Chemical mapping of a 177-nucleotide RNA with 2A3 and DMS. Conditions: 150 mM KOAc, 10 mM MgCl2 and 150 mM bicine (pH 8.5), 24 C. For DMS the reverse transcriptase was MarathonRT.

[RMDB]
RNA sequence: GGGAACGACUCGAGUAGAGUCGAAAAGCCUAACAGUUCGCUGUUAGGCAAAUGCACUGACUUCGCAACUGUGAAAAACACAACAGAAGUGUCUAUGCGAGGAUCGUUGCGUCUUCGGACGCAACAACUGGGCUAAGGUAUUCGUACCUUAGCCCAGAAAAGAAACAACAACAACAAC
Reactivity to 2A3 in 0.01 (KOAc 150mM, MgCl2 10mM, bicine 150mM(pH8.5), 24C), signal-to-noise 2, nucleotides 027 to 126: g000c000c010u000a000a000c000a020g090u130u130c190g010c110u010g000u010u000a000g000g000c000a010a030a010u100g000c000a010c070u060g050a010c000u010u020c010g020c050a100a090c090u040g000u040g170a120a020a010a030a000c100a020c030a130a070c000a130g130a230a060g090u030g040u060c100u060a070u080g020c020g020a020g040g000a170u130c150g000u010u000g000c000g000u000c010u030u010c120g100g010a000c060g020c000a010a000c000a000a000
Reactivity to DMS in 0.01 (KOAc 150mM, MgCl2 10mM, bicine 150mM(pH8.5), 24C), signal-to-noise 1, nucleotides 027 to 126: g000c000c000u000a020a010c000a000g030u010u020c280g030c040u000g020u000u000a000g020g000c000a000a000a100u000g000c120a050c010u020g000a070c020u000u000c000g000c120a070a160c180u000g000u030g000a060a160a030a080a050c010a020c080a020a060c200a070g000a050a100g000u000g000u000c020u000a070u000g020c050g020a040g010g040a040u000c210g000u020u000g000c000g010u000c000u000u040c150g000g010a000c000g020c000a000a000c000a020a120